[RMDB]
RNA sequence: GGGAACGACUCGAGUAGAGUCGAAAAGAUAUGGAUGAAAUCCCUCGAUAAGCUCGCCAUCGGAAACGAUGGGAGCUUUUGACGAGGAACUGUCCUAAGUCGGCAACCCUGGGUUCGCCCAGGGUAACUUCCGUUAAGUAUUCGUACUUAACGGAAGAAAAGAAACAACAACAACAAC
Reactivity to 2A3 in 0.01 (KOAc 150mM, MgCl2 10mM, bicine 150mM(pH8.5), 24C), signal-to-noise 3, nucleotides 027 to 126: g020a000u050a040u130g010g000a020u020g090a040a070a140u110c020c110c000u000c000g100a140u050a260a010g010c010u000c070g300c060c000a010u010c020g020g010a040a050a060c020g000a000u000g020g000g000a010g000c000u000u000u000u040g030a020c000g000a010g020g000a030a050c080u290g020u000c000c000u040a180a020g050u030c020g050g050c070a050a030c000c000c000u000g000g100g000u080u100c300g100c030c000c000a010g000g000g000u010a010a000
Reactivity to DMS in 0.01 (KOAc 150mM, MgCl2 10mM, bicine 150mM(pH8.5), 24C), signal-to-noise 6, nucleotides 027 to 126: g000a020u010a270u010g000g000a000u000g010a100a150a150u010c070c000c000u000c000g010a130u010a010a010g010c000u000c000g030c010c000a000u000c000g020g000a090a060a120c000g020a010u000g000g010g000a000g010c000u000u000u000u000g010a190c130g000a010g000g010a030a040c100u010g010u000c000c000u000a050a130g000u010c010g000g000c190a120a040c000c000c000u000g000g010g020u000u020c260g010c000c000c000a000g000g000g000u000a000a050